Overview
Structure probing data (DMS and 2A3) for a 177-nucleotide construct. Values are in units of 0.01, from 0 to 300, in steps of 10. For DMS the reverse transcriptase was MarathonRT.
[RMDB]
RNA sequence: GGGAACGACUCGAGUAGAGUCGAAAAACGCAUAUGCUACGGCAUAUGCGAGGGCGAUGAGGCCCGCCCAAACUGCCCUGAAAAGGGCUGAUGGCCUCUACUGACUGAGGAGCUACGGCUCCUCAGACCAUAAUUCCGUUUUCGAACGGAAUUAUGGAAAAGAAACAACAACAACAAC
Reactivity to DMS in 0.01 (KOAc 150mM, MgCl2 10mM, bicine 150mM(pH8.5), 24C), signal-to-noise 6, nucleotides 027 to 126: a100c020g010c000a000u000a000u000g020c000u000a110c210g010g020c000a000u000a000u000g010c000g010a130g000g010g020c000g010a120u020g010a000g000g000c000c000c010g000c000c000c000a040a130a070c070u010g000c000c000c000u000g000a080a050a130a090g010g000g010c000u000g000a110u010g000g000c000c000u000c010u020a040c130u010g020a120c010u000g000a010g010g000a010g010c000u000a130c260g030g010c000u000c000c000u000c000a000g010a120
Reactivity to 2A3 in 0.01 (KOAc 150mM, MgCl2 10mM, bicine 150mM(pH8.5), 24C), signal-to-noise 8, nucleotides 027 to 126: a000c010g000c000a000u000a000u000g010c010u020a050c260g120g000c010a000u000a000u000g000c000g000a020g000g000g000c000g040a070u100g000a050g000g000c000c000c000g010c000c000c000a020a030a020c040u030g000c000c000c000u010g020a030a020a020a010g000g000g000c000u000g010a010u010g000g000c010c000u000c000u010a050c050u040g070a030c000u000g000a000g000g000a000g000c000u030a040c220g090g000c000u020c000c000u000c000a000g000a000